An RNA of 207 nucleotides, treated with 2A3 and DMS and read out base by base.
It was measured as part of the RMDB library M2RFPK.
For 2A3 the reverse transcriptase was SuperScript II with manganese.
The DMS profile rests on 1,577 reads.
[RMDB]
RNA sequence: GGGAACGACUCGAGUAGAGUCGAAAAACGAGUGAGUUACGACUCACUCGACUUUUAAUGCUACCCAAAGGUCGUGACGAGUCGAUAAAACGCAGAGUCAAAAAGUCCGACGUUACGACGUCGGACAACGAGCGAGUUCUGUUCGCAGAACUCGCAAUCUAAACGUACACUUCGGUGUACGUUUAGAAAAAGAAACAACAACAACAAC
Reactivity to 2A3 in 0.01 (KOAc 150mM, MgCl2 10mM, bicine 150mM(pH8.5), 24C), signal-to-noise 2, nucleotides 027 to 156: a000c020g000a020g010u060g010a000g000u020u120a130c180g060a010c070u010c000a020c000u020c000g000a010c020u080u100u010u150a120a050u120g040c010u140a090c020c000c000a080a070a020g000g040u030c020g030u010g030a070c010g010a020g010u100c010g020a100u060a100a140a000a000c050g010c060a000g060a050g090u100c110a010a170a060a000a000g010u010c000c010g000a000c000g000u030u080a110c280g020a000c000g080u010c000g000g020a000c000a000a010c020g070a030g000c010g000a000g010u000u010c000u000g050u060u070c200g010c050a010g000a000a000c000u020c000g000c000a010a000
Reactivity to DMS in 0.01 (KOAc 150mM, MgCl2 10mM, bicine 150mM(pH8.5), 24C), signal-to-noise 1, nucleotides 027 to 156: a130c040g010a040g030u000g000a050g020u000u020a170c100g070a200c000u010c000a070c000u020c000g040a010c000u000u000u000u030a010a130u010g020c040u000a000c010c030c080a100a090a080g000g080u000c010g010u020g040a280c000g000a100g000u000c010g000a230u000a050a060a090a040c140g000c110a140g000a120g040u040c080a010a060a090a200a200g020u010c000c000g000a030c000g080u040u000a060c290g010a090c000g030u000c000g000g000a030c000a010a010c050g000a080g020c000g000a110g040u000u000c000u000g010u000u000c230g050c020a070g000a000a050c000u000c020g030c000a010a010